This 207-nucleotide RNA was probed chemically with 2A3.
For 2A3, 574 sequencing reads were counted.
The reactions ran in a buffer of 150 mM KOAc, 10 mM MgCl2 and 150 mM bicine (pH 8.5), at 24 C.
It was measured as part of the RMDB library M2RFPK.
RNA sequence: GGGAACGACUCGAGUAGAGUCGAAAAACGAGUCGUACGCAACUCGAAUGGUAUUGUCGGCGUAAAAGAACAAGACGUCACCGGACGCGACCGGGCUAAAAAGCGAAACGUCAUCUACGGAUGACGAAAAACGGACCUGGGUUCGCCCAGGUCCGAACAACCGAUCUUUGUUCGCAAAGAUCGGUUGAAAAGAAACAACAACAACAAC
Reactivity to 2A3 in 0.01 (KOAc 150mM, MgCl2 10mM, bicine 150mM(pH8.5), 24C), signal-to-noise 1, nucleotides 027 to 156: a000c010g010a000g030u020c080g060u170a010c060g000c060a050a000c040u020c120g070a130a110u160g110g010u110a080u140u090g080u140c030g030g060c000g000u010a040a040a180a020g100a130a000c060a090a060g070a020c000g000u020c020a010c020c000g010g000a000c000g020c000g010a010c010c000g000g020g030c070u120a070a000a000a000a000g050c010g080a100a030a000c000g000u000c000a000u000c000u010a000c130g080g000a010u000g010a000c000g050a060a010a000a000a000c010g020g000a000c010c030u010g000g000g040u020u070c060g050c030c000c000a000g020g000u000c000c000g000a000a000